[RMDB]
RNA sequence: GGGAACGACUCGAGUAGAGUCGAAAAAGCACUGGUACGAUACGUCGUACCAGUGCAGUCGUUGGGAUGUAACGCAAUUAAAUACAUGUGUGACGUGUAUUUGCGAACGACGUAAUUAUUUUUCAAAAUCACGCUAUCGUGUUCGCACGAUAGCGAACUCCUUCAUGUAGUUCGCUACAUGAAGGAGAAAAGAAACAACAACAACAAC
Reactivity to 2A3 in 0.01 (KOAc 150mM, MgCl2 10mM, bicine 150mM(pH8.5), 24C), signal-to-noise 4, nucleotides 027 to 156: a000g010c010a010c010u000g000g020u000a000c020g000a000u020a040c190g090u010c010g000u010a000c000c000a000g000u000g000c000a010g000u000c000g000u000u040g110g050g060a160u140g130u230a170a050c010g000c040a000a020u160u130a140a090a000u020a000c020a020u020g100u030g190u220g300a100c020g000u000g020u000a000u040u030u070g020c020g010a010a000c020g010a010c050g030u030a100a040u170u140a060u070u100u050u050u080c090a090a070a040a050u150c060a060c100g000c000u000a000u000c010g000u010g010u050u040c110g010c070a000c000g000a000u000a000g000c000g000a000a000
Reactivity to DMS in 0.01 (KOAc 150mM, MgCl2 10mM, bicine 150mM(pH8.5), 24C), signal-to-noise 1, nucleotides 027 to 156: a110g000c000a010c000u000g020g010u000a010c000g000a060u000a060c230g010u000c020g090u000a020c040c000a000g000u010g010c020a030g000u000c010g020u000u010g000g010g060a180u000g010u000a110a090c010g000c030a090a300u020u030a030a010a060u000a020c020a020u010g000u000g050u000g030a080c050g030u000g000u000a010u000u010u000g010c150g000a060a100c010g010a140c000g010u010a050a070u000u000a080u020u000u000u000u000c060a020a050a030a080u000c040a180c000g060c000u000a000u010c010g000u000g030u010u010c300g030c020a000c010g000a030u000a010g000c000g020a000a040